Background: Source: RMDB library TTRDES, as collected in RNAgym. This 177-nucleotide RNA was probed chemically with DMS. For DMS, 3,730 sequencing reads were counted.
[RMDB]
RNA sequence: GGGAACGACUCGAGUAGAGUCGAAAAAAAGAUAUGGAGGUGGGAUUAGCAUAUGUAUCGUUGAAACACCAUCGGAAACGAUGGUGUGGAGAUAUACAUAUGCGACGAUCCCACCUCCUAAGUCAAACUAAUCAUGUGUGUUCGCACACAUGAUUAGAAAAGAAACAACAACAACAAC
Reactivity to DMS in 0.01 (KOAc 150mM, MgCl2 10mM, bicine 150mM(pH8.5), 24C), signal-to-noise 4, nucleotides 027 to 126: a080a080a090g010a030u000a300u010g000g000a000g000g040u010g000g020g010a010u000u000a290g000c000a010u000a010u000g020u000a000u000c190g060u010u000g000a300a130a000c000a010c000c000a010u000c000g020g000a150a060a250c000g030a010u000g010g010u010g010u010g000g000a300g000a000u000a000u000a010c000a010u000a000u000g020c000g020a070c300g000a010u000c010c000c000a000c010c000u000c000c000u000a000a070g000u000c030a110a160a210